[RMDB]
Structure probing data (DMS and 2A3) for a 177-nucleotide construct. 2A3 adducts were read by reverse transcription with SuperScript II with manganese. The reactions ran in a buffer of 150 mM KOAc, 10 mM MgCl2 and 150 mM bicine (pH 8.5), at 24 C. Source: RMDB library M2PK50, as collected in RNAgym.
RNA sequence: GGGAACGACUCGAGUAGAGUCGAAAAUGUCCCAGUUUCGACUGGGACAAAAGCAUGAGGAGGAUCAAAGAUCUAAGCCGUCGCUCAUGCGUAAAGACGGCAAAAGGCUAGUGUUCGCACUAGCCAACCUUGAGCAGCGUUUCGACGCUGCUCAAGGAAAAGAAACAACAACAACAAC
Reactivity to DMS in 0.01 (KOAc 150mM, MgCl2 10mM, bicine 150mM(pH8.5), 24C), signal-to-noise 3, nucleotides 027 to 126: u010g020u000c000c000c000a010g010u000u000u020c200g030a020c010u020g000g010g000a010c000a000a010a080a110g000c010a010u010g000a010g030g030a170g000g000a120u000c120a090a080a110g010a090u000c050u010a110a140g000c010c000g010u000c030g000c060u000c000a010u000g000c010g010u000a040a070a090g010a020c030g010g000c030a040a040a100a080g000g020c000u000a000g010u000g010u000u000c200g000c010a010c000u000a000g000c000c010a010a010
Reactivity to 2A3 in 0.01 (KOAc 150mM, MgCl2 10mM, bicine 150mM(pH8.5), 24C), signal-to-noise 3, nucleotides 027 to 126: u050g000u000c000c000c000a000g000u020u040u080c180g100a010c000u000g000g000g000a000c010a000a050a000a000g000c010a010u020g010a010g120g050a060g070g040a030u120c110a150a160a030g030a010u020c010u070a130a040g000c000c000g000u010c020g040c010u030c010a020u020g000c000g010u010a030a020a000g020a000c000g010g000c000a030a040a030a050g000g000c000u000a000g000u010g040u050u110c200g000c100a000c000u000a000g000c000c010a000a000